[RMDB]
RNA sequence: GGGAACGACUCGAGUAGAGUCGAAAAUAUGCCAGGUGCAUACUGAUAAACGAACAAAAAGAAUCAAGCUUUUAAAGACAGUUUGCAGUGUUCAUUAUCCUUUCCAAUUCAGCUUCUUACCAGAUUCAUCAUGAACACUUCAGUGUAAGCAGCUUGACCGUAAAUAGGUGUUCGCACCUAUUUACGGAAAAGAAACAACAACAACAAC
Reactivity to 2A3 in 0.01 (KOAc 150mM, MgCl2 10mM, bicine 150mM(pH8.5), 24C), signal-to-noise 5, nucleotides 027 to 156: u100a030u040g030c050c040a130g150g010u110g040c020a020u020a060c040u050g040a040u080a060a100a040c090g050a040a020c060a050a090a050a030a030g110a030a040u090c030a050a020g020c040u040u110u110u260a120a100a010g110a050c030a040g020u040u060u030g010c050a030g030u000g020u050u010c020a010u010u070a040u040c020c000u040u060u010c040c010a070a140u080u110c030a020g010c000u030u010c000u030u020a040c020c010a050g020a290u080u070c020a070u070c050a070u250g050a050a030c050a020c070u120u100c050a030g010u020g020u180a010a030g020c020a000g010c010u020u070g000a030
Reactivity to DMS in 0.01 (KOAc 150mM, MgCl2 10mM, bicine 150mM(pH8.5), 24C), signal-to-noise 2, nucleotides 027 to 156: u000a020u000g030c000c050a190g010g070u000g000c020a050u000a080c010u000g010a060u010a010a000a140c010g010a030a100c070a150a090a110a100a090g000a210a170u030c090a080a130g010c030u000u020u000u000a090a120a130g020a080c070a060g030u000u000u000g040c040a050g020u000g020u000u000c010a100u000u000a040u010c060c050u020u000u000c020c080a070a200u010u000c100a050g010c020u000u000c000u000u000a070c030c020a180g000a140u000u010c070a090u000c070a130u000g010a020a050c010a040c020u000u000c050a100g030u000g010u010a030a070g000c170a060g020c010u000u010g010a160

The record gives the reactivity of an RNA of 207 nucleotides to 2A3 and DMS.
The RNA was probed in 150 mM KOAc, 10 mM MgCl2 and 150 mM bicine (pH 8.5) at 24 C.
For 2A3, 3,860 sequencing reads were counted.
2A3 adducts were read by reverse transcription with SuperScript II with manganese.